Annotation
The data come from the RNA Mapping Database (RMDB), library 15KLIB. This 170-nucleotide RNA was probed chemically with 2A3 and DMS. For 2A3, 3,066 sequencing reads were counted. Reactivities are given for positions 27 through 129. Conditions: 150 mM KOAc, 10 mM MgCl2 and 150 mM bicine (pH 8.5), 24 C.
RNA sequence: GGGAACGACUCGAGUAGAGUCGAAAAAUCCCGGGGAUCGGCGUCGCCCCCACAUAGCAGACCCCGGGUCCCCUUCCGAACGAGGGGGACGGUCCUUGGACCUCAGGGGGCCCAUGGAGCCGUGGGAAGAGGGAAGCCUUCGGGCUUCCCAAAAGAAACAACAACAACAAC
Reactivity to 2A3 in 0.01 (KOAc 150mM, MgCl2 10mM, bicine 150mM(pH8.5), 24C), signal-to-noise 2, nucleotides 027 to 129: a000u030c010c000c000g000g000g000g000a210u000c030g060g000c070g080u140c010g060c020c000c000c070c000a040c040a070u280a010g000c000a050g010a070c000c000c000c000g000g000g000u000c000c000c000c020u000u000c000c040g130a110a050c100g000a050g030g000g030g000g000a010c000g000g010u010c000c000u010u100g030g000a030c000c000u010c030a070g140g040g000g010g020c000c000c000a080u070g010g030a070g050c000c000g000u030g000g000g000a040a000g020a070
Reactivity to DMS in 0.01 (KOAc 150mM, MgCl2 10mM, bicine 150mM(pH8.5), 24C), signal-to-noise 2, nucleotides 027 to 129: a140u030c050c000c050g060g000g020g020a170u000c050g000g020c040g010u000c080g010c030c000c000c030c000a060c150a150u030a080g090c050a050g080a090c000c000c000c010g070g080g000u020c010c000c000c000u000u060c050c080g030a080a140c090g030a080g000g040g000g000g000a000c020g000g080u000c010c040u020u020g000g020a070c020c030u010c070a110g060g020g000g000g070c090c020c020a100u000g000g230a050g020c030c000g030u030g030g020g040a060a100g010a280